An RNA of 207 nucleotides, treated with DMS and 2A3 and read out base by base. For DMS, 3,745 sequencing reads were counted.

RNA sequence: GGGAACGACUCGAGUAGAGUCGAAAAUUCAUACAACUGUACUCAAAUGUACCUAAGCCGGUCCAAACCCGCAUAUUCUAUUGCCUGUCAGGCUCCUCAAGGCAAUUGGGUUUAUCUUUGUAGUCUAUAUUAACUUAAAUGUGCAGUAAGACUGGGGUGAUCAUACGGUAUUCGUACCGUAUGAUCAAAAAGAAACAACAACAACAAC
Reactivity to DMS in 0.01 (KOAc 150mM, MgCl2 10mM, bicine 150mM(pH8.5), 24C), signal-to-noise 2, nucleotides 027 to 156: u000u010c070a160u000a140c080a080a080c040u010g030u000a030c020u000c010a060a140a130u000g020u000a050c040c080u000a090a100g050c010c010g030g030u000c050c040a060a110a050c060c010c030g030c110a090u000a050u010u000c080u000a020u000u000g010c010c010u000g000u000c090a040g050g030c040u010c050c040u000c110a000a080g000g020c000a000a050u000u000g020g010g000u000u000u000a080u020c060u000u010u020g020u000a080g020u000c050u000a120u010a090u000u010a030a050c040u000u000a010a060a090u000g030u000g010c020a060g020u000a090a070g020a070c020u000g020g010g040g020
Reactivity to 2A3 in 0.01 (KOAc 150mM, MgCl2 10mM, bicine 150mM(pH8.5), 24C), signal-to-noise 3, nucleotides 027 to 156: u080u080c010a020u050a200c060a070a070c100u040g010u090a030c030u020c110a040a080a050u160g030u070a050c000c000u050a040a080g030c040c020g040g030u040c040c040a080a020a080c000c020c070g060c090a070u060a080u190u020c070u040a020u030u040g020c000c000u060g090u130c030a100g090g010c060u140c050c030u120c060a030a020g020g030c000a020a010u060u050g000g000g000u000u110u050a110u020c080u010u120u100g120u110a020g040u000c050u020a080u000a060u210u100a080a030c020u020u190a050a050a100u120g010u020g000c010a010g020u040a060a010g030a020c020u050g020g000g000g030
Conditions: 150 mM KOAc, 10 mM MgCl2 and 150 mM bicine (pH 8.5), 24 C. Source: RMDB library OK3TST, as collected in RNAgym. For 2A3 the reverse transcriptase was SuperScript II with manganese. DMS adducts were read by reverse transcription with MarathonRT.